About this RNA: The record gives the reactivity of an RNA of 177 nucleotides to DMS and 2A3. The data come from the RNA Mapping Database (RMDB), library OK2TST. The reactions ran in a buffer of 150 mM KOAc, 10 mM MgCl2 and 150 mM bicine (pH 8.5), at 24 C. For DMS, 61,438 sequencing reads were counted.
RNA sequence: GGGAACGACUCGAGUAGAGUCGAAAAGACGAUACCGGCCGAAGGACGGCCCGUACGGUCAGUCUGAUCGCCGAUAUCGACGCUCACGGCCGCAAUCGUAUUGGUGCUGAGGCCGAGGCUCAGCCGACAUUAAUUAGCAUUUCGAUGCUAAUUAAUGAAAAGAAACAACAACAACAAC
Reactivity to DMS in 0.01 (KOAc 150mM, MgCl2 10mM, bicine 150mM(pH8.5), 24C), signal-to-noise 9, nucleotides 027 to 126: g010a140c020g010a020u000a020c070c010g000g010c020c040g030a140a300g010g000a030c010g010g000c010c000c150g020u010a100c220g010g020u000c010a080g020u000c010u000g000a120u010c260g010c010c000g010a050u000a020u000c000g010a080c060g000c040u000c030a170c050g000g010c010c020g010c080a080a050u000c050g010u000a190u000u010g010g010u000g010c060u000g000a060g010g010c030c040g010a110g010g010c010u000c060a070g010c020c030g010a260
Reactivity to 2A3 in 0.01 (KOAc 150mM, MgCl2 10mM, bicine 150mM(pH8.5), 24C), signal-to-noise 9, nucleotides 027 to 126: g030a010c010g000a000u010a010c020c000g000g020c070c060g050a050a020g030g000a010c000g000g000c000c020c010g120u170a060c090g000g000u010c030a090g010u000c020u050g080a300u100c010g000c000c000g010a000u010a010u030c010g010a030c040g010c010u060c010a090c030g020g000c010c020g010c060a050a070u060c040g060u160a170u140u290g090g000u150g030c040u040g020a040g040g000c020c020g020a050g020g000c010u020c070a030g010c010c010g020a040